[RMDB]
The record gives the reactivity of an RNA of 177 nucleotides to DMS and 2A3. Conditions: 150 mM KOAc, 10 mM MgCl2 and 150 mM bicine (pH 8.5), 24 C. For 2A3 the reverse transcriptase was SuperScript II with manganese. Values cover nucleotides 27 to 126. Source: RMDB library OK1LIB, as collected in RNAgym.
RNA sequence: GGGAACGACUCGAGUAGAGUCGAAAAAUUCGGAAGAUACUGCUGGUGGCAGAUGGAUCAUGCAGGGGAAUACACUAUGUGUGAUGCAAAAGGAGAACUGGGAAUGAUGCAGGCCUUACUGUGCUACCUAUACAAGCGCUUUCGAGCGCUUGUAUAGAAAAGAAACAACAACAACAAC
Reactivity to DMS in 0.01 (KOAc 150mM, MgCl2 10mM, bicine 150mM(pH8.5), 24C), signal-to-noise 3, nucleotides 027 to 126: a070u020u000c040g000g020a100a040g000a050u020a040c070u000g010c040u010g010g040u010g010g020c030a090g000a090u010g010g000a050u010c030a050u000g010c060a030g000g000g010g010a130a090u050a110c160a060c020u010a050u030g000u010g030u010g010a040u010g000c050a030a020a050a050g000g000a080g000a040a060c090u000g010g010g040a060a090u020g000a040u000g000c110a020g000g010c040c030u000u000a060c090u010g020u020g000c050u000a050c130
Reactivity to 2A3 in 0.01 (KOAc 150mM, MgCl2 10mM, bicine 150mM(pH8.5), 24C), signal-to-noise 5, nucleotides 027 to 126: a010u140u120c030g040g020a040a010g020a110u090a160c010u030g060c030u060g000g070u050g090g000c020a010g020a060u050g030g010a030u070c030a020u080g030c030a070g030g000g030g070a050a060u200a090c080a040c060u070a210u140g030u000g000u000g020a020u090g050c030a020a060a030a010g020g020a050g030a080a010c050u060g010g010g030a040a050u100g050a030u070g010c000a020g020g080c010c000u070u120a110c050u040g000u020g070c030u050a020c010